[RMDB]
RNA sequence: GGGAACGACUCGAGUAGAGUCGAAAAACAACGUUCGCGUUGUAAGUUUGAUAUGGACCCACAGGAGCACGGAGAGGGCUUUCGGAAACGAAAGCCUACCCACCUCCGUGAACUACUCCGUGUGGGUCCUAAGUCUCCGUGGUCCAUUCGUGGACAAAGACGUAUUUGAUUUCGAUCAAAUACGUCUAAAAGAAACAACAACAACAAC
Reactivity to DMS in 0.01 (KOAc 150mM, MgCl2 10mM, bicine 150mM(pH8.5), 24C), signal-to-noise 1, nucleotides 027 to 156: a020c030a030a060c020g000u000u000c150g070c190g000u000u010g020u000a040a150g050u010u000u000g010a120u010a120u000g000g000a080c040c000c010a040c030a170g050g000a050g050c000a010c000g000g000a070g050a250g060g000g020c010u000u000u020c000g020g010a100a070a190c000g050a000a000a050g020c000c000u000a000c010c050c070a300c080c020u010c000c000g000u000g010a050a160c030u000a270c000u000c000c000g000u000g010u090g000g010g050u000c010c010u000a000a050g010u010c000u000c030c070g020u020g050g000u020c000c000a040u000u030c250g060u000g010g000a000c010a060a140